[RMDB]
RNA sequence: GGGAACGACUCGAGUAGAGUCGAAAAAGAAAGAGAGCGUAGCUCACACACAGACUAAGUCUGACACACACCUACGCUACAUGUGUGUGUGAAGUCGAGAUAUCGACAAGUGUGUGUGAUGAAAAAAUCCGCUUAAUAACUUCGGUUAUUAAGCGGAAAAAGAAACAACAACAACAAC
Reactivity to 2A3 in 0.01 (KOAc 150mM, MgCl2 10mM, bicine 150mM(pH8.5), 24C), signal-to-noise 1, nucleotides 027 to 126: a020g090a010a020a030g070a000g000a010g030c020g030u020a010g000c000u010c000a040c000a000c000a000c000a000g050a060c020u080a130a090g090u040c060u090g040a010c000a000c010a000c000a010c010c000u030a000c030g060c060u070a020c090a120u120g000u000g000u000g010u000g030u020g030a060a040g010u000c010g050a010g020a170u180a080u110c000g000a000c000a070a050g020u020g000u000g000u030g020u020g060a080u140g140a100a070a000a000a040a030
Reactivity to DMS in 0.01 (KOAc 150mM, MgCl2 10mM, bicine 150mM(pH8.5), 24C), signal-to-noise 2, nucleotides 027 to 126: a090g010a050a040a070g020a070g000a190g030c040g000u000a030g010c030u000c000a040c010a000c010a020c000a010g000a020c000u010a160a130g010u010c060u000g010a060c000a020c010a010c000a000c010c010u000a010c030g000c120u010a080c220a020u000g000u000g010u000g000u000g020u000g000a050a030g010u010c000g000a010g000a220u010a060u000c010g000a010c030a070a050g010u000g020u000g000u000g000u000g010a200u010g010a020a010a050a040a110a100